[RMDB]
RNA sequence: GGGAACGACUCGAGUAGAGUCGAAAAGAUAUGGAAGUAGUGCUACCAAACAGGCGUUGAAAUCGGAAACGAUGGAGCCUGCUAGGGGCAUCACUUCCUAAGUCAAACAAGCCCUUCGGGGCUUGAACUUACCCUUACUCUUCGGAGUAAGGGUAAGAAAAGAAACAACAACAACAAC
Reactivity to DMS in 0.01 (KOAc 150mM, MgCl2 10mM, bicine 150mM(pH8.5), 24C), signal-to-noise 2, nucleotides 027 to 126: g000a030u010a300u000g000g000a020a000g020u000a060g040u000g000c000u000a120c010c000a000a100a150c000a000g000g000c000g010u000u000g000a120a100a040u000c000g010g010a160a140a240c000g000a020u000g000g000a150g010c000c000u000g010c020u000a300g000g000g000g000c020a000u000c050a010c000u000u000c000c000u020a010a080g000u010c040a130a150a300c000a000a000g000c000c000c010u000u010c190g030g000g000g000c000u000u000g010a030a190
Reactivity to 2A3 in 0.01 (KOAc 150mM, MgCl2 10mM, bicine 150mM(pH8.5), 24C), signal-to-noise 1, nucleotides 027 to 126: g020a030u080a030u170g000g010a000a000g000u070a000g000u010g040c010u300a300c000c000a020a030a000c020a000g020g050c050g270u300u100g030a080a050a000u030c010g030g030a120a040a050c000g020a000u030g000g000a000g000c020c010u010g000c000u010a040g030g020g000g000c020a000u060c020a000c010u010u010c000c000u020a100a010g030u000c010a030a100a170c000a020a000g010c000c000c000u010u050c300g020g020g000g010c000u000u000g010a000a010